[RMDB]
RNA sequence: GGGAACGACUCGAGUAGAGUCGAAAACGAUCUGUUCGCAGAUCGAGCUACGGAGACGUAGCAAAGCGAGCGAGGAGCUGGACGCUCGCCCUACCGGAAAUGUAAGCAAAUGCACGUGUGCUAGCAUUUGCCCAGCUCCAGAGAGACAGCACACGAAUAGUCAGUCAUUAUUCGUAAUGACUGACUAAAAAGAAACAACAACAACAAC
Reactivity to 2A3 in 0.01 (KOAc 150mM, MgCl2 10mM, bicine 150mM(pH8.5), 24C), signal-to-noise 2, nucleotides 027 to 156: c020g000a000u000c010u000g020u040u030c170g000c030a000g010a000u000c010g000a040g010c000u000a000c000g020g020a070g020a030c000g000u000a000g000c010a000a040a000g020c000g000a000g000c010g000a000g000g000a010g000c000u010g000g010a040c040g010c000u000c010g010c020c000c000u050a050c020c040g070g050a060a040a020u140g030u140a030a080g010c000a000a010a000u000g020c000a010c080g000u000g000u000g000c000u010a020g000c000a010u000u010u000g000c010c000c000a000g000c000u000c010c000a000g030a010g010a000g010a030c020a020g000c000a000c000a000c010g010a010a030
Reactivity to DMS in 0.01 (KOAc 150mM, MgCl2 10mM, bicine 150mM(pH8.5), 24C), signal-to-noise 1, nucleotides 027 to 156: c020g000a010u020c000u000g020u000u010c230g000c010a020g020a040u000c000g030a110g040c000u150a000c010g040g000a300g000a300c030g000u020a000g000c000a060a040a030g000c060g000a020g020c000g010a090g040g000a120g030c000u000g020g000a200c060g040c030u010c010g030c000c030c070u010a180c020c040g010g000a070a060a170u000g020u000a190a080g000c020a000a020a060u000g000c000a060c010g000u000g020u010g010c000u000a170g030c000a030u050u000u000g010c030c000c000a110g010c020u000c020c040a110g000a130g020a110g030a070c070a030g000c000a040c000a040c000g000a060a120